[RMDB]
RNA sequence: GGGAACGACUCGAGUAGAGUCGAAAAGGAUCACUGGAACCACCACGCGUAAUUUCUCAGUGGGCAGGGAAGGACUAGAGUACGUGUGGGGUAACCUGGAUCCCGUCAGAGUGUGGGCCCAGGAAUCAGCUGGAGGACAUUUCGAUGUCCUCCAGCUAAAAGAAACAACAACAACAAC
Reactivity to 2A3 in 0.01 (KOAc 150mM, MgCl2 10mM, bicine 150mM(pH8.5), 24C), signal-to-noise 1, nucleotides 027 to 126: g020g000a020u010c030a060c300u050g040g000a060a030c040c060a270c110c000a000c030g060c000g030u030a050a090u040u170u050c070u010c050a090g040u070g070g040g000c040a070g000g000g050a060a040g020g000a000c060u100a080g040a000g070u030a000c000g000u000g000u010g000g000g000g000u010a010a100c000c000u000g010g010a010u000c000c010c000g070u060c060a090g040a080g090u240g010u070g010g020g020c000c030c020a010g030g000a040a080u160c040

The record gives the reactivity of an RNA of 177 nucleotides to 2A3.
2A3 adducts were read by reverse transcription with SuperScript II with manganese.
Reactivities are rounded to 0.1 and cut off at 0 and 3.